Chemical mapping of a 177-nucleotide RNA with DMS. Reactivities are given for positions 27 through 126. DMS adducts were read by reverse transcription with MarathonRT.
[RMDB]
RNA sequence: GGGAACGACUCGAGUAGAGUCGAAAAGAUAUGGAUCACACUCCUUGAAUCGAAGAACUAUAUGGGAGUAUGUCGGAAACGACAUAUGACUGUAUAGGGAGAUUCCAAGGAGUGUGAUCCUAAGUCAUCUAGAUCAUUAGUUCGCUAAUGAUCUAGAAAAAGAAACAACAACAACAAC
Reactivity to DMS in 0.01 (KOAc 150mM, MgCl2 10mM, bicine 150mM(pH8.5), 24C), signal-to-noise 6, nucleotides 027 to 126: g010a050u010a300u010g000g010a010u000c000a010c000a010c000u000c000c000u000u000g010a040a010u000c000g010a110a170g000a110a230c000u000a000u000a000u000g000g000g010a300g010u000a000u000g010u000c000g000g000a140a090a230c000g010a010c000a000u000a000u000g010a300c000u000g000u000a010u000a010g010g000g010a060g000a000u000u000c140c110a010a000g000g010a020g020u000g010u000g000a000u000c000c010u000a010a080g000u010c050a170